Structure probing data (2A3 and DMS) for a 177-nucleotide construct. The RNA was probed in 150 mM KOAc, 10 mM MgCl2 and 150 mM bicine (pH 8.5) at 24 C.
RNA sequence: GGGAACGACUCGAGUAGAGUCGAAAACACAGGCGACUUAAUCGGAGAGCGGUUACACGCGAGGAAGAUCAAAUUAUUACAUCAGUAGACUCGAGAUUACUACAACUUGCGUUGCUAUCUCAAAUAACAUCUAGUAUGCCUUCGGGCAUACUAGAUGAAAAGAAACAACAACAACAAC
Reactivity to 2A3 in 0.01 (KOAc 150mM, MgCl2 10mM, bicine 150mM(pH8.5), 24C), signal-to-noise 3, nucleotides 027 to 126: c070a000c060a020g090g020c020g000a070c040u100u180a090a060u100c100g040g000a040g000a000g080c040g030g020u060u080a030c030a010c060g030c000g000a030g030g050a040a050g020a050u050c070a050a090a090u180u290a100u090u150a070c040a070u030c010a000g010u030a030g030a030c030u000c110g100a080g020a130u070u150a050c050u050a040c020a060a060c020u040u060g060c030g070u000u020g010c030u020a080u090c020u000c020a070a130a040u160a060a010
Reactivity to DMS in 0.01 (KOAc 150mM, MgCl2 10mM, bicine 150mM(pH8.5), 24C), signal-to-noise 2, nucleotides 027 to 126: c130a100c120a090g010g020c030g010a090c090u000u020a050a110u000c100g000g020a070g000a080g000c050g000g030u000u000a080c100a020c060g020c080g000a080g000g020a160a090g020a050u000c030a050a060a090u000u020a070u010u000a130c170a060u010c070a080g010u000a070g000a090c040u000c080g000a090g000a040u010u000a070c100u000a040c130a100a050c050u000u000g010c100g030u000u000g000c050u000a050u000c000u000c020a000a040a080u000a030a150